[RMDB]
RNA sequence: GGGAACGACUCGAGUAGAGUCGAAAAAGGUUGAGAAAAGCGGUGCUCAUCCAUCCGUUUUAAAGCAUCAAGUUUGCACACCAGGUGGUACAACUAUUGCCGGGUUGUGCGUAAUGGAAGAAAAGGGCACCGGGUACGCAUUCGUGCGUACCCGGUGAAAAGAAACAACAACAACAAC
Reactivity to 2A3 in 0.01 (KOAc 150mM, MgCl2 10mM, bicine 150mM(pH8.5), 24C), signal-to-noise 1, nucleotides 027 to 126: a000g230g000u140u130g000a000g060a050a000a130a120g100c080g000g000u070g000c000u030c010a120u040c060c000a070u000c000c030g040u220u000u000u000a030a200a000g070c000a070u160c040a020a090g040u090u140u010g000c000a000c000a000c000c020a000g050g010u000g040g000u020a070c090a090a060c190u060a070u000u010g000c000c000g000g070g000u070u210g010u000g000c000g000u010a070a040u000g000g110a000a040g040a050a120a110a170g000g100g000
Reactivity to DMS in 0.01 (KOAc 150mM, MgCl2 10mM, bicine 150mM(pH8.5), 24C), signal-to-noise 1, nucleotides 027 to 126: a020g000g060u000u000g010a110g000a000a060a110a020g000c000g040g040u010g010c100u030c040a080u000c180c060a080u000c000c030g060u000u000u000u010a040a160a090g040c040a110u060c230a150a180g040u000u040u010g030c060a000c010a000c000c000a090g040g040u000g000g000u000a040c300a010a110c220u000a000u000u000g040c000c020g000g040g000u000u000g000u040g010c050g040u000a000a150u020g010g070a000a130g010a040a030a050a150g050g000g020